Chemical mapping of a 207-nucleotide RNA with 2A3 and DMS.
For DMS the reverse transcriptase was MarathonRT.
[RMDB]
RNA sequence: GGGAACGACUCGAGUAGAGUCGAAAAUGUAAAACAGGUGUUUGACCAUGUCAUCUCUGUGUUCAGAAUCUUCCAUGGUUUCCCAUCACAUUCAGAAUAAAACCCGAAGAUGUCACCAUGGCCUAAAAGGCACUCCAUUAUUUGCCUGUGCCACCUAAUGAUUUAUCCGAUUCGUCGGAUAAAUCAUAAAAGAAACAACAACAACAAC
Reactivity to 2A3 in 0.01 (KOAc 150mM, MgCl2 10mM, bicine 150mM(pH8.5), 24C), signal-to-noise 5, nucleotides 027 to 156: u090g030u040a010a020a080a020c030a030g010g070u040g060u090u080u090g070a060c060c060a060u110g050u030c010a060u020c020u000c030u060g050u010g080u190u110c050a050g020a110a140u030c070u130u000c060c010a040u050g010g000u010u020u040c000c020c000a020u080c020a030c010a050u110u120c050a030g090a170a100u140a090a080a050a040c010c000c040g010a040a010g020a040u070g060u070c010a020c070c010a040u060g020g000c000c020u130a110a100a020a030g020g000c020a020c020u050c030c010a050u110u090a090u190u240u110g030c010c030u030g010u030g040c000c000a020c010c020u090a100
Reactivity to DMS in 0.01 (KOAc 150mM, MgCl2 10mM, bicine 150mM(pH8.5), 24C), signal-to-noise 3, nucleotides 027 to 156: u000g010u000a040a060a080a110c020a080g000g010u000g020u000u000u000g000a050c000c050a090u000g010u000c030a020u000c010u000c030u010g030u000g010u000u010c030a130g000a090a080u000c060u000u010c070c050a130u000g000g010u000u000u000c040c040c010a150u010c040a060c070a160u000u000c030a110g000a080a120u000a100a060a110a150c070c040c030g010a090a070g000a050u000g000u000c040a080c170c010a050u000g020g020c020c060u010a030a040a080a120g000g010c000a010c050u000c030c030a070u000u000a150u000u020u010g020c040c030u000g010u000g000c020c010a070c060c020u010a130
The RNA was probed in 150 mM KOAc, 10 mM MgCl2 and 150 mM bicine (pH 8.5) at 24 C. Values are in units of 0.01, from 0 to 300, in steps of 10.